[RMDB]
RNA sequence: GGGAACGACUCGAGUAGAGUCGAAAACGGAAGCAUUAAAACCAUUCGAGCUAGUCAAUGCGUGGCGUGUCUCUCCGCAGCGUGUUGGCGAAUGUAAAGAGUGACUAAGCAUGUAGUGCCGAGGAUGAUAAGAGCAAUUCGUUCGCGAAUUGCUCAACAUCGUUGCUCUGUUCGCAGAGCAACGAUGAAAAGAAACAACAACAACAAC
Reactivity to 2A3 in 0.01 (KOAc 150mM, MgCl2 10mM, bicine 150mM(pH8.5), 24C), signal-to-noise 2, nucleotides 027 to 156: c070g020g040a070a000g030c040a080u110u140a010a040a050a070c020c010a020u060u090c050g010a030g040c030u040a020g000u000c000a000a000u000g020c020g000u040g150g000c020g010u090g060u000c020u000c000u000c030c000g000c010a020g020c000g000u020g000u000u000g030g000c000g000a010a000u090g010u050a010a110a060g010a010g020u030g010a010c010u040a050a020g040c020a040u110g040u160a050g040u050g010c000c020g040a020g060g030a070u100g010a040u070a220a110g000a000g010c000a000a000u000u000c000g010u020u040c110g000c000g130a000a010u000u000g010c000u010c000a000a010
Reactivity to DMS in 0.01 (KOAc 150mM, MgCl2 10mM, bicine 150mM(pH8.5), 24C), signal-to-noise 1, nucleotides 027 to 156: c000g030g000a120a010g000c010a050u000u010a060a100a100a150c000c040a160u000u010c050g010a260g020c020u000a170g030u000c010a010a030u000g010c000g040u030g010g130c010g050u010g000u030c110u000c030u000c210c010g060c010a030g020c040g000u000g020u010u000g000g060c000g040a080a060u000g000u010a040a100a190g000a140g010u000g010a150c030u000a110a220g000c070a040u000g020u000a100g010u000g050c010c000g010a070g040g040a120u050g040a130u010a090a130g000a070g000c000a010a010u020u000c000g010u000u060c300g040c040g000a010a000u000u000g000c020u000c020a060a010
Structure probing data (2A3 and DMS) for a 207-nucleotide construct. High 2A3 reactivity points to a flexible backbone, as in loops and unpaired stretches. For DMS the reverse transcriptase was MarathonRT. Source: RMDB library M2RFPK, as collected in RNAgym.